[RMDB]
RNA sequence: GGGAACGACUCGAGUAGAGUCGAAAAAUUAUCGUCCUGUGUAUGUCGGUGGUACUAUGCAGUCCAUAAACUUCUCUGAGGUUCUCCAGACUAAUAACACUGUUGAUACCCCUCUUGGUGCUUACGCUGGACAUGGUAUCUCUUAUGCGAAUAAUGGGUCUAAGUCCAUUUUCGAAUGGACUUAGACAAAAGAAACAACAACAACAAC
Reactivity to DMS in 0.01 (KOAc 150mM, MgCl2 10mM, bicine 150mM(pH8.5), 24C), signal-to-noise 1, nucleotides 027 to 156: a110u000u010a040u000c090g020u000c010c040u000g050u000g030u000a060u000g030u000c080g030g000u010g040g030u020a050c060u020a050u010g020c050a090g010u000c060c030a140u000a080a060a080c040u010u000c020u000c070u000g000a110g000g030u000u000c010u000c010c000a080g000a130c050u020a060a090u020a110a080c080a070c010u010g000u010u000g010a090u000a080c010c040c020c000u000c030u000u000g010g000u000g020c000u010u010a070c070g040c020u000g000g010a030c050a110u000g000g030u010a010u000c020u000c040u010u000a070u000g000c050g000a080a070u000a070a060u000g020g010
Reactivity to 2A3 in 0.01 (KOAc 150mM, MgCl2 10mM, bicine 150mM(pH8.5), 24C), signal-to-noise 2, nucleotides 027 to 156: a010u130u050a050u070c050g020u020c010c000u000g030u030g030u010a080u160g110u080c140g050g130u200g040g000u030a050c040u110a110u140g060c000a000g050u000c030c020a080u120a100a080a060c040u140u040c070u040c120u110g000a050g120g050u080u060c020u060c110c000a030g020a080c070u110a110a110u100a160a020c050a020c110u050g040u070u020g070a070u070a120c000c000c030c000u020c010u060u120g110g020u070g020c000u020u020a020c060g020c040u020g010g000a000c000a000u010g010g000u030a010u040c050u000c000u050u120a070u140g010c050g010a030a000u270a210a100u280g130g030

About this RNA:
Chemical mapping of a 207-nucleotide RNA with DMS and 2A3. Conditions: 150 mM KOAc, 10 mM MgCl2 and 150 mM bicine (pH 8.5), 24 C. For 2A3, 836 sequencing reads were counted. For 2A3 the reverse transcriptase was SuperScript II with manganese. For DMS, 2,814 sequencing reads were counted.